[RMDB]
RNA sequence: GGGAACGACUCGAGUAGAGUCGAAAAGAUAUGGACCGGGACAUGCGGUACGUGAGGGUCGGAAACGACCCUCUUCGCAACAGCCACGGUCCUAAGUCAAAGCUCAUUGGCUUCGGCCAAUGAGCAACGUUAAUGCUAGGUUCGCCUAGCAUUAACGAAAAGAAACAACAACAACAAC
Reactivity to 2A3 in 0.01 (KOAc 150mM, MgCl2 10mM, bicine 150mM(pH8.5), 24C), signal-to-noise 4, nucleotides 027 to 126: g010a010u040a020u120g000g000a010c000c020g020g000g020a060c100a170u130g070c070g120g210u180a070c100g090u080g020a000g000g000g000u030c010g020g020a060a050a010c000g000a010c010c010c000u000c010u010u030c010g000c010a040a040c020a030g050c020c000a300c130g000g000u010c000c000u020a050a010g000u010c050a090a080a050g000c000u000c000a000u000u000g000g000c000u030u100c300g140g000c000c000a000a000u000g000a010g010c000a000a000
Reactivity to DMS in 0.01 (KOAc 150mM, MgCl2 10mM, bicine 150mM(pH8.5), 24C), signal-to-noise 5, nucleotides 027 to 126: g020a030u000a260u000g000g000a010c000c010g010g010g020a030c040a170u010g020c040g020g020u010a080c220g010u000g000a000g000g020g000u000c000g010g000a050a060a110c010g010a010c000c000c000u000c000u000u000c020g030c010a060a080c140a120g020c010c010a060c010g000g000u010c000c000u000a010a050g000u000c030a120a120a180g010c000u000c000a000u000u000g000g010c000u000u020c210g020g000c000c000a000a000u000g000a010g000c000a000a010

This 177-nucleotide RNA was probed chemically with 2A3 and DMS. The reactions ran in a buffer of 150 mM KOAc, 10 mM MgCl2 and 150 mM bicine (pH 8.5), at 24 C. Source: RMDB library TTRDEL, as collected in RNAgym. The 2A3 profile rests on 11,880 reads. For 2A3 the reverse transcriptase was SuperScript II with manganese.